[RMDB]
RNA sequence: GGGAACGACUCGAGUAGAGUCGAAAAAGCCAUACCAUUACGAUGGUAUGGCAAGUCCGUGACAGCGAUGGAUCCCGCCUGGCCGAUGCCGAACUGCCGAUCUGGCUGAUGGUUCCUGCCCCGUCAAAAAACGUAAAGCACUUCGGUGCUUUACGAACUUAGGUCCAUUCUUCGGAAUGGACCUAAGAAAAGAAACAACAACAACAAC
Reactivity to 2A3 in 0.01 (KOAc 150mM, MgCl2 10mM, bicine 150mM(pH8.5), 24C), signal-to-noise 2, nucleotides 027 to 156: a000g000c000c000a000u010a000c000c000a000u050u040a060c300g150a030u000g000g000u000a000u000g000g000c000a010a010g010u000c010c010g010u030g020a050c010a020g040c070g130a080u090g030g020a030u050c000c010c010g010c000c040u000g040g000c000c020g030a050u170g000c000c000g040a090a060c080u090g020c030c040g080a160u030c050u120g010g040c020u070g060a090u090g020g000u000u050c000c020u020g040c010c000c000c010g040u000c010a030a000a040a040a030a030c000g000u000a000a000a000g000c000a010c000u020u120c280g210g010u000g000c000u000u010u000a000c000g000a000a000